Structure probing data (2A3) for a 207-nucleotide construct. For 2A3 the reverse transcriptase was SuperScript II with manganese. For 2A3, 1,278 sequencing reads were counted.
RNA sequence: GGGAACGACUCGAGUAGAGUCGAAAACCUCGUUAAUCACGCUGCAACAUUAUAGUUGCCAACGACGACAACUACGCACUCGCUGCUUAAAACCCAGUAGGGUGCCGUCUGACUGAAGCCGUGCUUGUGCGUUCAGAUUUCAGGCGUCGAUUCUCACGCUGCAUACAAACUUCGGUUUGUAUGCAGCAAAAGAAACAACAACAACAAC
Reactivity to 2A3 in 0.01 (KOAc 150mM, MgCl2 10mM, bicine 150mM(pH8.5), 24C), signal-to-noise 3, nucleotides 027 to 156: c010c000u040c010g010u040u150a180a090u030c060a000c180g050c110u110g000c000a010a010c010a040u180u080a120u300a300g000u000u000g000c030c000a090a040c020g090a010c030g000a000c000a210a070c080u200a080c110g000c010a000c000u000c000g010c000u000g000c000u030u040a000a060a010a000c000c010c000a010g040u080a300g020g040g000u000g000c000c000g000u000c000u000g000a000c020u000g000a010a000g030c040c030g110u070g070c220u190u220g030u170g010c000g110u040u020c010a030g030a190u110u090u040c000a000g000g030c000g020u050c020g030a090u130u000c010u000c020a040c100